[RMDB]
This 207-nucleotide RNA was probed chemically with 2A3 and DMS. Reactivities are rounded to 0.1 and cut off at 0 and 3. For DMS, 2,481 sequencing reads were counted. The reactions ran in a buffer of 150 mM KOAc, 10 mM MgCl2 and 150 mM bicine (pH 8.5), at 24 C.
RNA sequence: GGGAACGACUCGAGUAGAGUCGAAAACCGUAGGUAAGCGAAGAACUACCCUAAGCUGUACCUCCCCACCUAUCUUUCGAAAGAGAGAUAGAGGGUACAGAACGCGGGUAGGGAGCUUACCUAAACGGAAACAUCAUUCGCUUCGGCGAAUGAUGAACUUAGAGAUGUCGUUCGCGACAUCUCUAAGAAAAGAAACAACAACAACAAC
Reactivity to 2A3 in 0.01 (KOAc 150mM, MgCl2 10mM, bicine 150mM(pH8.5), 24C), signal-to-noise 4, nucleotides 027 to 156: c010c000g020u010a000g010g000u000a000a000g000c070g110a300a010g030a090a050c000u000a000c000c010c010u050a090a030g040c000u000g000u000a000c010c000u080c070c030c010c010a030c000c000u000a000u010c000u010u000u010c010g060a100a080a070g000a020g000a000g010a000u000a000g010a010g000g000g000u010a000c000a000g000a150a030c070g000c080g040g000g000u000a000g010g000g010a010g010c000u000u000a000c000c000u000a070a020a000c020g040g050a130a020a000c000a010u010c000a000u000u000c000g010c010u040u060c270g120g000c000g000a000a000u000g000a000u000g000a010a010
Reactivity to DMS in 0.01 (KOAc 150mM, MgCl2 10mM, bicine 150mM(pH8.5), 24C), signal-to-noise 2, nucleotides 027 to 156: c000c030g090u000a000g010g000u010a030a010g010c050g000a130a220g000a100a160c000u000a030c030c010c010u000a240a150g010c000u010g010u000a020c000c010u000c300c080c040c080a300c200c000u020a010u000c000u000u000u000c010g050a150a230a300g020a010g000a000g010a000u000a030g010a190g000g000g050u000a010c000a020g030a060a030c010g000c300g000g030g050u000a000g000g000g020a300g010c010u000u000a040c010c000u010a000a030a090c030g000g000a220a070a180c000a020u000c000a030u000u000c010g020c000u000u000c230g090g010c000g010a010a000u000g010a010u000g000a040a090